[RMDB]
RNA sequence: GGGAACGACUCGAGUAGAGUCGAAAACAUGGAUAAAGAGUGAGCGAGCGACUGCCGCGAUCAGGCGGGGCAGUGCGAUCGCGGCGCUGCCGAUAUCGCCAGCAUGGAUGCCGUGACUGAUGAUCGCCGCAUCGUGCGCAUUCGUGCGCACGAUGCGAAAAGAAACAACAACAACAAC
Reactivity to 2A3 in 0.01 (KOAc 150mM, MgCl2 10mM, bicine 150mM(pH8.5), 24C), signal-to-noise 1, nucleotides 027 to 126: c030a060u120g210g000a000u100a230a000a180g120a000g000u080g000a070g100c050g000a000g000c090g070a070c050u050g010c030c000g000c000g000a190u050c160a080g170g000c060g000g070g000g000c010a000g050u000g130c000g040a090u070c000g000c000g050g000c000g000c000u000g000c030c030g050a120u070a000u070c000g080c050c010a000g020c000a010u050g070g000a210u070g130c110c040g040u090g000a040c140u090g020a030u200g020a030u070c080g000c000

Chemical mapping of a 177-nucleotide RNA with 2A3. Conditions: 150 mM KOAc, 10 mM MgCl2 and 150 mM bicine (pH 8.5), 24 C. For 2A3 the reverse transcriptase was SuperScript II with manganese.